An RNA of 177 nucleotides, treated with DMS and 2A3 and read out base by base. For DMS the reverse transcriptase was MarathonRT. The data come from the RNA Mapping Database (RMDB), library OK2TST. The DMS profile rests on 28,808 reads.
RNA sequence: GGGAACGACUCGAGUAGAGUCGAAAAUCUGGUUGAGCGGUGGGCGCGCCUGCCGCGGUUUCAACUGCACAAACAUCGAACCUGUAUUGAAUGUCGCCCCGCCGGGGCGCUCCCCAGCGUCGCCGUACACGUAUAGUACUUUCGAGUACUAUACGUGAAAAGAAACAACAACAACAAC
Reactivity to DMS in 0.01 (KOAc 150mM, MgCl2 10mM, bicine 150mM(pH8.5), 24C), signal-to-noise 9, nucleotides 027 to 126: u010c080u010g020g020u000u000g000a120g020c010g010g030u000g010g000g030c100g030c300g020c020c010u000g010c020c020g010c010g000g010u010u010u010c040a030a060c050u000g010c110a080c150a060a060a080c130a080u000c070g010a060a080c080c040u000g010u010a100u000u010g000a070a080u010g010u000c030g010c040c030c010c030g020c200c070g000g010g000g010c010g000c020u010c040c030c020c070a160g000c030g010u000c020g010c010c020g010u010a190
Reactivity to 2A3 in 0.01 (KOAc 150mM, MgCl2 10mM, bicine 150mM(pH8.5), 24C), signal-to-noise 8, nucleotides 027 to 126: u040c030u080g030g000u080u130g030a030g030c010g010g020u030g010g000g020c060g010c050g060c030c010u020g020c000c010g000c010g010g000u030u070u040c010a030a020c030u090g010c050a050c060a100a160a020c030a100u080c050g050a050a070c010c020u060g040u130a210u050u110g060a140a070u100g040u090c020g020c010c010c010c020g090c060c050g020g000g000g000c000g000c000u020c000c000c000c010a010g000c000g030u030c020g020c040c000g000u030a030